[RMDB]
RNA sequence: GGGAACGACUCGAGUAGAGUCGAAAACUGUCAAUCUGCACAAUUUGUGGGAGCACAUGAUCUAUGUAAAAGAUCCUACGCUGUCCUUUAUCUUGACCCCGCAGUUGGUCAUCCCGUUCCCGUUGUACGACUAUAGGCCAUUCGUGGCCUAUAGUCGAAAAGAAACAACAACAACAAC
Reactivity to DMS in 0.01 (KOAc 150mM, MgCl2 10mM, bicine 150mM(pH8.5), 24C), signal-to-noise 1, nucleotides 027 to 126: c080u020g020u000c040a030a100u000c040u120g020c020a090c130a070a100u000u000u000g050u010g000g010g010a060g000c060a060c150a040u020g000a030u000c050u020a090u000g040u020a050a190a080a050g010a010u010c000c100u000a040c080g010c030u010g000u000c020c010u000u000u000a080u000c020u000u010g000a090c070c070c080c080g030c020a030g020u010u000g010g000u000c090a040u010c000c010c010g030u010u000c000c000c010g000u000u000g010u000a090
Reactivity to 2A3 in 0.01 (KOAc 150mM, MgCl2 10mM, bicine 150mM(pH8.5), 24C), signal-to-noise 1, nucleotides 027 to 126: c070u060g050u120c000a080a070u000c040u100g040c000a020c010a080a160u000u050u100g090u050g020g010g000a000g000c010a030c000a110u100g020a010u030c020u020a070u220g210u230a110a120a070a020g030a020u000c030c050u040a070c100g000c030u040g180u140c000c010u170u240u080a060u010c090u070u050g050a060c000c000c000c080g000c010a000g000u000u040g050g030u060c000a040u090c000c040c000g030u010u000c000c000c010g050u060u130g020u070a030
Overview:
Conditions: 150 mM KOAc, 10 mM MgCl2 and 150 mM bicine (pH 8.5), 24 C. Structure probing data (DMS and 2A3) for a 177-nucleotide construct. For DMS, 1,099 sequencing reads were counted. Values are in units of 0.01, from 0 to 300, in steps of 10. For 2A3 the reverse transcriptase was SuperScript II with manganese. DMS adducts were read by reverse transcription with MarathonRT. Source: RMDB library OK2TST, as collected in RNAgym.